[RMDB]
RNA sequence: GGGAACGACUCGAGUAGAGUCGAAAAGCUGUCACUGGAUCAGGCGACGACCGCCUCGAUCCGCUACCUCAACCUGAUCGGCGACCGGUACCUUGAGCUCGGCCGCGGUCACAGCGGUCAGCGGCUGUACAAGCCCACGAUUCGUCGUGGGCUUGUAAAAAGAAACAACAACAACAAC
Reactivity to 2A3 in 0.01 (KOAc 150mM, MgCl2 10mM, bicine 150mM(pH8.5), 24C), signal-to-noise 3, nucleotides 027 to 126: g030c040u030g020u080c060a040c230u180g030g000a030u000c000a010g010g000c020g000a110c100g140a090c080c080g020c010c010u060c080g010a020u010c000c000g000c010u020a010c020c000u040c020a050a080c000c030u050g030a070u030c040g050g010c020g040a030c010c010g010g040u070a060c010c030u080u110g100a040g040c040u040c050g000g000c000c000g000c030g030g030u070c050a020c010a110g030c020g020g010u010c010a010g010c000g020g000c010u010g000
Reactivity to DMS in 0.01 (KOAc 150mM, MgCl2 10mM, bicine 150mM(pH8.5), 24C), signal-to-noise 2, nucleotides 027 to 126: g000c000u000g000u000c070a130c080u020g000g030a000u010c000a000g030g020c000g000a230c190g000a030c190c030g020c010c000u000c200g030a020u030c000c000g030c120u010a070c070c010u020c090a060a100c110c080u000g000a030u000c060g000g040c000g000a120c030c070g000g010u010a030c070c090u020u030g040a250g030c050u000c040g000g040c030c020g010c000g020g000u060c120a140c160a120g000c030g010g000u000c010a020g000c100g010g000c030u010g000